An RNA of 177 nucleotides, treated with 2A3 and DMS and read out base by base. For DMS the reverse transcriptase was MarathonRT. For 2A3 the reverse transcriptase was SuperScript II with manganese. 2A3 is a SHAPE reagent: it acylates the 2'-hydroxyl of flexible nucleotides of all four kinds. Values cover nucleotides 27 to 126. Conditions: 150 mM KOAc, 10 mM MgCl2 and 150 mM bicine (pH 8.5), 24 C.

RNA sequence: GGGAACGACUCGAGUAGAGUCGAAAAGAGGCACCCUCCCACUUGAAGUAGAUACGAGCCGGGGUCUCGAGGGCCUGUUCAAGCUGGUAGGCCCGGUAGAGCGGCGUGGGCCGCCAGAGGGCGAGGACCCUAACUGAAACUUCGGUUUCAGUUAGGGAAAAGAAACAACAACAACAAC
Reactivity to 2A3 in 0.01 (KOAc 150mM, MgCl2 10mM, bicine 150mM(pH8.5), 24C), signal-to-noise 2, nucleotides 027 to 126: g020a020g020g010c040a260c080c020c010u020c000c020c010a040c020u020u080g050a140a040g050u150a060g050a140u080a150c040g010a000g020c030c010g020g000g000g030u000c010u000c050g000a130g040g050g010c000c030u000g010u050u180c020a090a080g030c070u070g070g080u080a100g030g000c060c030c010g000g000u040a010g020a000g020c040g030g010c050g030u110g000g100g030c000c000g010c000c020a030g010a060g020g000g020c010g020a040g000g020a020
Reactivity to DMS in 0.01 (KOAc 150mM, MgCl2 10mM, bicine 150mM(pH8.5), 24C), signal-to-noise 2, nucleotides 027 to 126: g000a080g000g010c060a130c050c030c040u010c000c010c020a240c050u000u000g000a090a120g010u010a090g010a120u000a090c070g000a080g020c060c080g010g020g000g010u010c010u000c030g000a110g000g010g010c000c000u000g000u000u000c040a070a140g020c080u000g000g000u000a050g030g020c000c000c010g010g000u000a100g000a100g020c050g010g000c020g010u000g000g000g000c000c010g000c010c010a040g000a100g010g010g000c030g010a110g000g000a190